[RMDB]
Overview: Chemical mapping of a 207-nucleotide RNA with 2A3 and DMS. The RNA was probed in 150 mM KOAc, 10 mM MgCl2 and 150 mM bicine (pH 8.5) at 24 C. The 2A3 profile rests on 1,849 reads. Source: RMDB library M2RFPK, as collected in RNAgym. DMS (dimethyl sulfate) methylates the pairing face of unpaired adenines and cytosines.
RNA sequence: GGGAACGACUCGAGUAGAGUCGAAAAUUAAUGAAGCAAAUCUCCAAACGCCAACGAUGAGCGUUUCGCGAUCGCCGCUUAAGGCUUUUGCCGAGGCUGCUUGAGCCUUGUUACCAAAGAAAAGCCGAAAACCCAAAUGUCUUCGGACAUUUGGGAACUUACCUUAGAACUUCGGUUCUAAGGUAAGAAAAGAAACAACAACAACAAC
Reactivity to 2A3 in 0.01 (KOAc 150mM, MgCl2 10mM, bicine 150mM(pH8.5), 24C), signal-to-noise 3, nucleotides 027 to 156: u200u110a050a110u120g040a010a000g010c030a050a070a060u040c030u010c040c040a000a030a000c020g000c010c040a110a090c130g180a240u160g030a050g070c000g000u000u010u020c030g000c030g010a030u050c050g040c150c030g020c050u070u070a070a040g000g000c000u020u000u020u030g030c000c000g020a010g000g000c020u070g000c050u110u140g090a010g010c010c000u010u020g030u060u100a050c010c020a000a110a000g040a020a070a050a000g020c020c020g040a050a040a050a100c000c000c000a000a000a010u000g000u000c000u030u060c150g070g010a000c000a010u000u000u000g000g000g000a000a000
Reactivity to DMS in 0.01 (KOAc 150mM, MgCl2 10mM, bicine 150mM(pH8.5), 24C), signal-to-noise 1, nucleotides 027 to 156: u000u010a060a080u010g040a040a080g020c040a130a080a030u020c020u000c000c030a050a090a030c010g000c000c000a070a090c050g000a200u000g000a110g020c010g020u000u010u020c090g000c030g000a110u000c110g020c050c090g040c020u000u000a020a100g020g000c010u000u020u000u000g040c030c040g000a060g050g040c000u010g060c130u000u000g040a050g020c050c020u000u020g050u000u000a300c070c050a130a100a150g000a040a030a020a030g020c060c060g000a060a020a060a120c000c000c020a010a010a010u000g010u010c000u000u000c290g030g000a050c020a020u000u000u000g030g020g000a000a010